[RMDB]
RNA sequence: GGGAACGACUCGAGUAGAGUCGAAAAGGAGGACGAAGCAUAUUUCUGUUUCUGGAGGAUUAUUUAUAAUCUGCCGGAAAGUCUUUCAGGUGGCUGGGAUAUGUUCAGUCUGGUAGAAUUAAGCACGAAAACGUGUCCUUGUUCGCAAGGACACGAAGAUGUUACUAGACUUCGGUCUAGUAACAUCAAAAGAAACAACAACAACAAC
Reactivity to 2A3 in 0.01 (KOAc 150mM, MgCl2 10mM, bicine 150mM(pH8.5), 24C), signal-to-noise 3, nucleotides 027 to 156: g090g040a040g000g000a010c030g040a030a010g030c010a020u020a040u060u060u020c040u060g050u030u050u000c000u010g000g020a020g000g000a010u000u030a040u030u300u000a100u070a100a080u070c090u110g140c090c050g040g050a080a020a010g030u010c030u020u070u030c010a030g000g070u040g110g000c040u040g010g010g000a000u000a020u060g070u120u040c050a020g000u000c010u020g000g020u060a060g080a100a040u130u120a100a050g060c080a020c150g080a030a060a050a040c020g000u000g000u000c000c010u010u000g000u040u060c120g000c130a000a000g010g010a030c010a000c000g000a010a000
Reactivity to DMS in 0.01 (KOAc 150mM, MgCl2 10mM, bicine 150mM(pH8.5), 24C), signal-to-noise 2, nucleotides 027 to 156: g000g020a200g030g020a060c020g000a140a130g000c040a080u000a030u000u000u000c010u000g000u000u000u000c000u000g040g010a040g030g000a010u000u000a030u000u010u010a080u000a110a020u010c000u000g000c010c020g010g010a010a010a110g020u000c020u010u000u010c080a080g030g020u000g020g010c050u000g000g000g010a060u000a010u000g010u000u000c080a250g020u010c020u000g000g020u000a080g020a110a130u000u000a060a140g010c070a090c080g000a070a060a080a180c010g020u000g020u000c000c000u000u000g020u000u000c300g010c020a020a020g000g020a010c000a010c000g010a020a030